[RMDB]
RNA sequence: GGGAACGACUCGAGUAGAGUCGAAAAUCCGCAUGAAGCUGGAUUCGGUAGUAAUCGCGCCUCAGAAGGGCGCGGUGAAUACGUCCCUGCUCCUUGCACACACCGCCCGUCAAAGCACCCGAGUGAGUACGACCAGAGAGUUCGCUCUCUGGUCGUAAAAAGAAACAACAACAACAAC
Reactivity to 2A3 in 0.01 (KOAc 150mM, MgCl2 10mM, bicine 150mM(pH8.5), 24C), signal-to-noise 2, nucleotides 027 to 126: u000c000c000g130c030a040u160g110a070a080g010c110u130g000g000a100u080u000c020g120g000u050a000g000u040a000a000u020c000g000c000g000c000c010u120c020a150g050a160a050g060g020g020c000g000c000g000g000u000g000a000a000u050a050c010g010u000c010c010c000u070g020c030u090c000c000u000u020g020c010a000c020a000c020a010c070c000g020c020c010c010g000u010c110a000a010a160g040c000a020c000c000c050g030a030g050u130g010a070g090
Reactivity to DMS in 0.01 (KOAc 150mM, MgCl2 10mM, bicine 150mM(pH8.5), 24C), signal-to-noise 1, nucleotides 027 to 126: u000c000c000g000c040a050u040g020a030a130g000c070u000g050g000a100u020u000c060g020g090u000a090g030u000a050a020u000c000g010c040g010c050c010u010c110a260g000a110a300g010g020g000c030g000c060g000g000u000g000a200a230u000a070c060g000u000c010c000c000u030g070c070u010c020c010u010u000g000c150a120c050a020c000a000c010c010g020c010c000c080g030u000c160a000a030a000g000c040a080c000c010c050g000a080g050u010g000a130g010
Notes:
The record gives the reactivity of an RNA of 177 nucleotides to 2A3 and DMS. 2A3 adducts were read by reverse transcription with SuperScript II with manganese. 2A3 is a SHAPE reagent: it acylates the 2'-hydroxyl of flexible nucleotides of all four kinds. The data come from the RNA Mapping Database (RMDB), library RFM100.